[RMDB]
This 207-nucleotide RNA was probed chemically with DMS and 2A3. The DMS profile rests on 3,041 reads. 2A3 adducts were read by reverse transcription with SuperScript II with manganese. Source: RMDB library RNAMAK, as collected in RNAgym.
RNA sequence: GGGAACGACUCGAGUAGAGUCGAAAAGAGAUUGAUUUCGAUCAAUCUCAAAAGCGUACUACCCAAGCACCCAUGAACUACUCGAAUAUCCCAAAUAGGAUAUUACGAGCAUGGGUUCCCUUGGGUAUCGCAAAAGGCCACUAUUUCGAUAGUGGCCCCUGUAAUGCAGUUUCGACUGCAUUACAGGAAAAGAAACAACAACAACAAC
Reactivity to DMS in 0.01 (KOAc 150mM, MgCl2 10mM, bicine 150mM(pH8.5), 24C), signal-to-noise 1, nucleotides 027 to 156: g000a020g010a050u000u000g010a020u010u000u000c270g000a050u000c010a000a010u000c000u010c000a040a010a010a220g020c010g030u000a170c110u000a000c000c000c000a020a020g050c100a060c030c010c020a030u000g010a180a080c000u000a070c000u000c010g040a050a010u010a000u000c000c010c010a070a170a270u000a090g010g000a010u000a000u000u000a090c010g000a040g020c000a020u000g010g000g000u000u010c050c050c010u000u020g000g010g030u000a000u010c020g000c010a120a060a130a070g020g000c000c010a010c000u000a000u000u000u000c190g000a060u000a020g010u000g020g000c000c010
Reactivity to 2A3 in 0.01 (KOAc 150mM, MgCl2 10mM, bicine 150mM(pH8.5), 24C), signal-to-noise 3, nucleotides 027 to 156: g000a010g000a000u010u020g010a010u040u110u200c190g020a010u000c000a010a000u000c000u000c000a070a090a010a000g020c010g020u080a060c050u010a010c010c000c010a020a000g030c110a010c000c000c000a010u020g000a060a060c070u150a070c000u300c000g010a010a000u000a000u010c000c040c060a200a300a190u290a140g000g000a000u020a010u030u150a210c000g000a000g000c000a000u000g000g000g000u020u030c010c010c000u000u010g000g000g000u010a000u040c000g020c000a000a060a030a120g010g010c020c010a000c000u020a000u010u230u100c270g130a040u000a000g000u000g000g000c000c010